RNA sequence: GGGAACGACUCGAGUAGAGUCGAAAAUAAUGAGGUGAUGGAGCUUCUGGAUCCGCGGAAUCAGAAUGUUAUACGCCAUUCGUCAAAGCAGGCGAAUAGAGUAUUCGAUGCAUGUAUGUAUGGUGCGCUAUUGCCUUGGGUUCGCCCAAGGCAAUAGAAAAGAAACAACAACAACAAC
Reactivity to DMS in 0.01 (KOAc 150mM, MgCl2 10mM, bicine 150mM(pH8.5), 24C), signal-to-noise 3, nucleotides 027 to 126: u000a060a080u010g000a080g040g020u000g010a080u010g000g000a120g000c050u000u010c030u000g000g010a060u000c050c040g050c150g000g000a080a080u000c030a070g020a100a040u010g000u010u000a080u020a150c030g000c020c010a020u000u000c010g010u000c020a070a110a130g030c120a030g010g000c020g020a020a010u000a070g020a140g000u000a100u000u010c040g010a110u000g000c020a080u010g010u020a020u010g010u000a040u010g010g010u000g010c120g000
Reactivity to 2A3 in 0.01 (KOAc 150mM, MgCl2 10mM, bicine 150mM(pH8.5), 24C), signal-to-noise 2, nucleotides 027 to 126: u160a000a030u090g060a000g050g050u050g040a160u100g040g080a010g050c040u070u000c000u030g070g020a060u050c010c020g030c080g080g020a050a070u070c010a030g110a130a060u140g060u080u160a110u020a170c040g000c020c020a080u070u070c000g040u000c020a050a100a100g010c010a030g240g100c020g040a010a000u060a050g270a010g060u150a040u000u050c010g010a010u040g040c020a000u070g010u210a030u050g040u020a040u020g050g000u020g070c050g040

This 177-nucleotide RNA was probed chemically with DMS and 2A3. 2A3 is a SHAPE reagent: it acylates the 2'-hydroxyl of flexible nucleotides of all four kinds. Conditions: 150 mM KOAc, 10 mM MgCl2 and 150 mM bicine (pH 8.5), 24 C. It was measured as part of the RMDB library OK2TRN. Values cover nucleotides 27 to 126.